[RMDB]
RNA sequence: GGGAACGACUCGAGUAGAGUCGAAAAACGGGCACGUUCGCGUGCCCGUAAUGAACGCUGCAACGCGCAGAGAUCUCGCGAGAGCGCGAAUGCUCAAAGAAACAUUUCCAGUUUUCGAACUGGAAAAUCAGAAUGUGUUCUUCGGAACACAUUCUGAAAAAGAAACAACAACAACAAC
Reactivity to DMS in 0.01 (KOAc 150mM, MgCl2 10mM, bicine 150mM(pH8.5), 24C), signal-to-noise 1, nucleotides 027 to 126: a020c000g010g000g140c000a030c010g090u000u010c170g020c010g020u000g000c000c000c010g030u070a000a030u000g000a190a050c060g000c020u000g000c110a100a100c110g000c030g010c150a140g000a100g000a110u010c030u000c020g030c030g020a190g020a030g000c010g010c030g000a050a090u000g000c100u010c030a180a060a120g000a160a070a060c220a180u000u000u000c000c010a000g020u000u000u000u010c180g000a020a000c000u000g000g000a000a000a040a100

Chemical mapping of a 177-nucleotide RNA with DMS. The DMS profile rests on 663 reads. Conditions: 150 mM KOAc, 10 mM MgCl2 and 150 mM bicine (pH 8.5), 24 C. Values are in units of 0.01, from 0 to 300, in steps of 10. In probing experiments dimethyl sulfate is read out at A N1 and C N3, which are open when not base-paired.